Source information
Conditions: 150 mM KOAc, 10 mM MgCl2 and 150 mM bicine (pH 8.5), 24 C. Structure probing data (DMS and 2A3) for a 177-nucleotide construct. The 2A3 profile rests on 3,995 reads. DMS adducts were read by reverse transcription with MarathonRT. It was measured as part of the RMDB library OK1LIB. Values cover nucleotides 27 to 126.
RNA sequence: GGGAACGACUCGAGUAGAGUCGAAAAGAAUAAAUAGUGUCUUGGAGCGCGCGGGGUAAACAUAUAUGGUUCAUAUAUGUCCGUAGGCGCGUAAAGAAAGCGCGUCCAAGCGAGAGAAGACUCGCAAAAUCGCAUUAUACUUCGGUAUAAUGCGAUUAAAAGAAACAACAACAACAAC
Reactivity to DMS in 0.01 (KOAc 150mM, MgCl2 10mM, bicine 150mM(pH8.5), 24C), signal-to-noise 3, nucleotides 027 to 126: g010a100a080u040a060a070a070u030a080g000u010g010u000c030u020u000g010g010a300g000c010g000c040g010c000g000g010g010g010u050a120a080a040c010a010u000a010u000a010u000g000g020u030u030c000a000u000a000u000a010u020g000u000c020c020g020u030a070g000g000c010g000c000g010u020a060a070a070g020a060a070a130g010c040g000c030g030u030c020c060a090a130g000c000g010a010g000a140g000a120a120g010a060c000u000c000g000c040a070a060
Reactivity to 2A3 in 0.01 (KOAc 150mM, MgCl2 10mM, bicine 150mM(pH8.5), 24C), signal-to-noise 3, nucleotides 027 to 126: g040a030a040u240a190a090a060u210a010g100u060g010u010c010u020u100g080g100a080g010c010g000c000g000c010g000g010g010g010u120a050a110a000c010a000u000a000u000a000u010g280g000u170u140c040a000u000a000u000a000u010g040u010c010c000g030u030a090g070g000c050g010c010g000u040a010a030a000g100a010a080a020g030c040g000c000g040u050c010c010a050a040g000c000g000a000g000a010g020a250a000g040a030c000u000c040g000c000a080a100